[RMDB]
Notes: Structure probing data (DMS and 2A3) for a 177-nucleotide construct. Conditions: 150 mM KOAc, 10 mM MgCl2 and 150 mM bicine (pH 8.5), 24 C. Source: RMDB library OK2TRN, as collected in RNAgym.

RNA sequence: GGGAACGACUCGAGUAGAGUCGAAAACUCAGCAAAACUGAUCUCUUUGGUCAAUUCAAAGGGACUAAAAUCCACUUUGAGGUAUUUGUCCCCGGUGUAUUUACCGAAAAUGGUAGAGACAAUUAACACGAUAGAGGUGAUUCGUCACCUCUAUCGUAAAAGAAACAACAACAACAAC
Reactivity to DMS in 0.01 (KOAc 150mM, MgCl2 10mM, bicine 150mM(pH8.5), 24C), signal-to-noise 2, nucleotides 027 to 126: c040u000c070a130g020c110a060a050a080a110c110u000g000a100u000c000u010c210u000u010u010g020g000u000c100a070a140u020u010c010a020a020a020g010g000g020a030c050u020a050a050a090a190u000c010c030a050c060u010u020u010g010a050g000g000u010a070u000u000u000g000u000c040c000c000c080g020g000u000g020u000a010u000u000u000a000c030c000g000a090a020a100a080u020g000g010u010a010g020a010g000a060c050a060a070u000u000a100a040c180
Reactivity to 2A3 in 0.01 (KOAc 150mM, MgCl2 10mM, bicine 150mM(pH8.5), 24C), signal-to-noise 2, nucleotides 027 to 126: c000u000c000a020g040c090a110a070a020a050c070u200g200a270u040c050u050c000u130u070u110g040g000u040c040a040a070u060u000c010a020a050a000g000g010g000a010c000u080a020a020a020a110u070c020c000a100c120u100u060u190g150a130g060g020u100a050u040u050u040g010u010c000c030c000c010g160g000u130g010u170a090u060u070u010a000c000c020g110a180a010a030a070u270g040g020u030a020g010a000g010a030c000a030a180u160u120a110a060c080